[RMDB]
RNA sequence: GGGAACGACUCGAGUAGAGUCGAAAAUGAAAAUCUACUACCGAUGAUGUAAGUCUUACAAUGUUCGAACCAGUACCAGAUCUUAAUUUGGAGGCCUCCGUAGAACUAGGGGAGGUAAAUAUAGAUCAAACAACACCUAUGAUAAAGGAAAAUAGCGCAUACGUUUAAUCUUCGGAUUAAACGUAUGAAAAGAAACAACAACAACAAC
Reactivity to DMS in 0.01 (KOAc 150mM, MgCl2 10mM, bicine 150mM(pH8.5), 24C), signal-to-noise 2, nucleotides 027 to 156: u010g000a070a100a110a110u000c000u000a090c050u000a220c080c010g020a050u000g060a110u000g000u000a050a140g000u020c060u020u000a080c090a070a120u000g010u000u000c030g040a110a080c050c010a110g000u000a120c080c010a060g000a070u000c040u020u000a080a110u000u010u000g000g020a130g030g000c000c020u020c020c030g000u000a110g010a140a150c110u010a100g030g040g000g000a040g070g020u000a000a010a100u000a120u000a080g000a070u000c010a040a070a120c010a060a080c060a050c000c010u000a080u000g020a130u010a060a080a090g000g000a040a010a040a070u000a090g000c080g040
Reactivity to 2A3 in 0.01 (KOAc 150mM, MgCl2 10mM, bicine 150mM(pH8.5), 24C), signal-to-noise 3, nucleotides 027 to 156: u100g020a040a010a000a050u090c030u020a070c020u050a080c040c020g110a090u080g000a000u040g030u090a070a060g050u030c040u040u020a060c080a070a110u120g010u060u060c020g030a060a030c030c040a040g040u050a050c000c020a020g020a040u050c020u040u120a120a090u070u090u100g110g010a070g070g040c000c000u000c000c010g090u060a030g040a240a100c080u050a050g030g060g000g000a000g020g010u030a000a030a000u090a010u020a000g020a020u040c030a000a110a030c050a030a020c010a040c030c030u040a070u080g070a050u090a120a080a020g000g000a030a030a000a080u040a030g070c070g000